Chemical mapping of a 207-nucleotide RNA with 2A3 and DMS. For DMS, 4,397 sequencing reads were counted. 2A3 adducts were read by reverse transcription with SuperScript II with manganese.
RNA sequence: GGGAACGACUCGAGUAGAGUCGAAAAUGAACCACACAUGCAAGGGAUCUAGGUUGCAUGUUCCUUAUGAUCAUCUAAUGCCUGAGAUAGAUGGAACAGUUUCAUCCUGAAACCAUCUGCUCCACUCCCUGUCCAUGGAAAAAUUGUCUUCCACGAACUAAUUAUGCGUCUUCGGACGCAUAAUUAGAAAAGAAACAACAACAACAAC
Reactivity to 2A3 in 0.01 (KOAc 150mM, MgCl2 10mM, bicine 150mM(pH8.5), 24C), signal-to-noise 4, nucleotides 027 to 156: u090g020a060a030c040c010a020c020a010c000a050u030g050c030a060a070g070g020g030a040u090c070u130a050g100g020u060u070g010c060a020u010g020u030u060c030c020u150u200a140u280g080a070u060c020a000u000c070u140a170a020u170g060c000c020u060g010a060g010a150u080a040g010a010u020g000g020a050a100c020a020g000u110u300u290c120a090u100c010c010u010g000a070a020a000c000c010a010u000c000u010g000c000u010c020c010a070c040u040c010c000c010u010g030u040c060c020a060u020g010g010a050a030a020a060a060u060u060g020u010c050u030u000c010c020a030c060g040a060a020
Reactivity to DMS in 0.01 (KOAc 150mM, MgCl2 10mM, bicine 150mM(pH8.5), 24C), signal-to-noise 2, nucleotides 027 to 156: u000g010a050a200c050c020a060c060a090c030a040u000g000c050a140a070g000g040g000a060u010c100u010a070g040g040u000u000g010c110a060u000g020u000u010c010c050u010u000a120u000g010a090u000c020a020u010c060u010a070a110u000g010c040c050u000g020a100g020a080u010a040g030a120u010g000g010a070a240c020a060g000u000u000u000c050a180u020c110c090u020g020a070a070a160c040c030a020u000c020u010g010c020u000c000c020a040c050u000c000c000c020u020g010u000c090c010a090u010g000g020a030a030a080a070a100u010u000g000u000c060u000u000c010c020a120c110g020a110a300

For DMS the reverse transcriptase was MarathonRT. As a SHAPE reagent, 2A3 marks flexible, mostly unpaired nucleotides at the ribose 2'-OH.